This 177-nucleotide RNA was probed chemically with 2A3 and DMS. The 2A3 profile rests on 2,059 reads. DMS adducts were read by reverse transcription with MarathonRT. It was measured as part of the RMDB library OK1LIB. For DMS, 1,942 sequencing reads were counted.
[RMDB]
RNA sequence: GGGAACGACUCGAGUAGAGUCGAAAAUCUUGCCUUUCAUCUUCUCUGCAGCCGACAGAUCCGCUUCCGUUUGGCGUCGACCUCGAAGUGGCGGCGGUGCCAGUGUAUGACGGAGAGAUAGAACAGGGCUACGAUAUCGGUUCGCCGAUAUCGUAGCAAAAGAAACAACAACAACAAC
Reactivity to 2A3 in 0.01 (KOAc 150mM, MgCl2 10mM, bicine 150mM(pH8.5), 24C), signal-to-noise 4, nucleotides 027 to 126: u050c020u010u050g090c000c000u030u080u020c010a040u000c000u210u050c010u010c000u020g030c010a020g050c020c040g020a040c090a070g070a070u050c010c000g020c040u060u050c010c050g140u010u050u180g030g000c010g160u100c020g140a300c030c010u090c030g080a110a050g140u040g090g010c070g000g000c000g040g000u010g020c050c050a080g030u100g060u090a200u180g160a130c020g000g000a020g030a000g000a000u030a100g030a010a040c100a060g080g040
Reactivity to DMS in 0.01 (KOAc 150mM, MgCl2 10mM, bicine 150mM(pH8.5), 24C), signal-to-noise 1, nucleotides 027 to 126: u010c020u000u040g020c000c020u020u010u020c020a070u000c030u010u000c000u000c000u000g000c000a030g010c030c030g060a030c050a080g000a160u040c040c000g020c000u000u010c020c070g000u000u000u000g000g060c050g060u020c110g020a240c050c080u040c210g000a050a030g010u050g000g030c070g020g000c050g000g000u000g000c200c050a070g010u040g000u010a030u010g000a130c040g000g000a010g010a070g010a040u000a020g000a010a030c250a040g000g020